[RMDB]
Annotation: Conditions: 150 mM KOAc, 10 mM MgCl2 and 150 mM bicine (pH 8.5), 24 C. Structure probing data (DMS and 2A3) for a 207-nucleotide construct.
RNA sequence: GGGAACGACUCGAGUAGAGUCGAAAACGCUGGGAUCGCCGCUUUCAGAGCCUUGGAUUUAUACAACCCCUACUGAAGCGCGCACGGUAGAACUUGUAUUGUCAGGCUCUGAAAUGCGAUCCUGUGCUGAAGCGCGCACGGCAACCGAAAGGUGCGAGGAAUGUAUUAUGUUCGCAUAAUACAUUCCAAAAGAAACAACAACAACAAC
Reactivity to DMS in 0.01 (KOAc 150mM, MgCl2 10mM, bicine 150mM(pH8.5), 24C), signal-to-noise 2, nucleotides 027 to 156: c030g070c030u010g000g000g000a020u010c000g030c030c050g010c070u000u000u000c010a010g000a020g020c010c000u000u040g070g010a200u000u000u010a080u010a100c050a020a080c080c070c080c010u010a030c000u010g000a040a060g000c000g020c030g060c030a300c040g020g000u000a030g000a060a020c050u000u000g000u010a080u000u010g010u010c080a080g000g010c000u000c000u000g000a010a030a040u000g000c010g010a010u000c000c000u000g020u000g040c020u010g020a070a080g010c010g000c000g000c000a150c020g000g020c030a140a140c030c020g010a060a160a200g020g040u000g030c000g030a260
Reactivity to 2A3 in 0.01 (KOAc 150mM, MgCl2 10mM, bicine 150mM(pH8.5), 24C), signal-to-noise 6, nucleotides 027 to 156: c020g000c010u020g000g000g000a000u010c000g000c000c010g030c020u000u000u000c010a010g000a010g010c020c010u150u190g180g030a220u200u300u100a040u100a010c020a010a030c020c010c020c000u010a000c000u020g050a220a080g010c010g010c000g000c010a000c000g000g000u000a000g010a130a030c030u020u030g010u050a030u040u130g270u280c070a010g000g000c000u000c000u010g000a000a000a000u040g000c000g000a000u000c000c000u010g000u020g000c010u050g020a120a040g000c010g000c000g010c020a000c010g030g000c020a080a080c010c000g030a020a050a030g010g000u020g000c010g020a070

For 2A3 the reverse transcriptase was SuperScript II with manganese. The DMS profile rests on 3,817 reads. Source: RMDB library RNAMAK, as collected in RNAgym.